[RMDB]
RNA sequence: GGGAACGACUCGAGUAGAGUCGAAAACAGGAAGAAAAGGUUGAGGGUGAUGGUGGGAGGAGCAUUGCUACCCAAAAUGCUCUACUAAUCCCUAGUUUUGACUAUCAAUCCUUGGUAGAAUGCAGUAGUUAGCAUUGUUUAUGGAAUGGGACUAUGAUAAUAUAGUACGUUUCGACGUACUAUAUUAAAAAGAAACAACAACAACAAC
Reactivity to 2A3 in 0.01 (KOAc 150mM, MgCl2 10mM, bicine 150mM(pH8.5), 24C), signal-to-noise 7, nucleotides 027 to 156: c040a010g060g030a030a050g010a030a090a020a020g060g010u050u040g010a020g020g030g020u050g030a080u060g030g050u060g020g030g020a060g010g010a000g010c000a010u020u060g030c060u150a150c040c020c010a040a110a000a000u020g000c000u000c000u020a020c010u030a030a060u030c020c010c000u020a050g000u000u070u070u090g060a050c040u050a040u180c030a060a030u050c010c020u030u010g010g000u030a040g040a110a050u090g020c020a020g020u100a020g020u080u170a010g020c010a020u020u030g050u070u150u080a110u070g040g040a080a090u050g020g030g020a020c040u100a070u190g070a070
Reactivity to DMS in 0.01 (KOAc 150mM, MgCl2 10mM, bicine 150mM(pH8.5), 24C), signal-to-noise 6, nucleotides 027 to 156: c050a120g010g010a090a070g010a070a040a050a060g020g020u000u010g010a080g010g010g020u000g010a060u000g030g020u000g020g010g050a100g010g010a040g010c020a030u000u000g020c040u000a110c040c020c030a060a070a050a050u000g000c010u000c010u000a120c070u010a110a150u000c020c020c020u000a110g010u000u000u000u000g020a130c060u000a080u010c040a070a120u000c050c050u000u000g020g030u000a060g010a070a080u000g020c020a080g020u000a060g010u000u000a080g010c030a060u000u000g010u000u010u000a120u010g000g010a060a080u000g010g000g010a130c030u000a070u000g010a260
The record gives the reactivity of an RNA of 207 nucleotides to 2A3 and DMS. The reactions ran in a buffer of 150 mM KOAc, 10 mM MgCl2 and 150 mM bicine (pH 8.5), at 24 C. For DMS the reverse transcriptase was MarathonRT.